The data come from the RNA Mapping Database (RMDB), library OK3TST. An RNA of 207 nucleotides, treated with 2A3 and DMS and read out base by base. Values cover nucleotides 27 to 156. Reactivities are rounded to 0.1 and cut off at 0 and 3.
[RMDB]
RNA sequence: GGGAACGACUCGAGUAGAGUCGAAAAGAAUUUGAGGGAUGCUGACUUUCAAGGAAUACUGCAUGACAGGCAUCAAGAUAAACCUGAUGAAGAAAACAUAGGCCAGAAUCUGGGAAUCGGGAGCAAAGUAAUACAGCUUCGGGGACAGGCACGUAAACAUACGUACCUCAUUCGUGAGGUACGUAUGAAAAGAAACAACAACAACAAC
Reactivity to 2A3 in 0.01 (KOAc 150mM, MgCl2 10mM, bicine 150mM(pH8.5), 24C), signal-to-noise 2, nucleotides 027 to 156: g020a040a090u110u110u210g030a100g000g100g000a050u090g060c020u070g020a100c030u070u090u080c080a070a100g060g030a040a040u080a150c020u050g030c020a070u100g060a040c040a030g000g050c000a010u010c040a050a060g020a060u160a020a060a060c000c010u040g010a020u050g030a030a150g010a090a110a010a010c030a060u080a040g000g020c020c000a030g010a120a080u030c040u080g050g010g040a050a040u080c080g020g000g000a000g040c000a060a150a000g040u060a030a060u080a140c060a010g000c020u020u070c060g010g000g000g020a020c010a040g010g070c040a040c110g030u050a020a020a000
Reactivity to DMS in 0.01 (KOAc 150mM, MgCl2 10mM, bicine 150mM(pH8.5), 24C), signal-to-noise 1, nucleotides 027 to 156: g020a110a090u000u010u010g040a120g020g010g000a090u010g000c030u010g000a120c040u000u000u000c090a130a100g000g010a030a100u000a070c060u000g000c040a070u040g060a050c080a050g010g030c020a110u030c040a030a140g030a250u000a080a070a090c000c010u010g020a110u010g010a040a060g010a140a060a060a100c060a110u010a110g000g010c000c000a070g000a070a090u010c040u000g010g010g010a010a070u000c050g000g010g000a020g070c040a020a070a100g010u010a090a060u000a080c050a120g000c050u000u000c010g000g000g000g000a090c040a050g010g050c030a020c000g010u010a040a070a180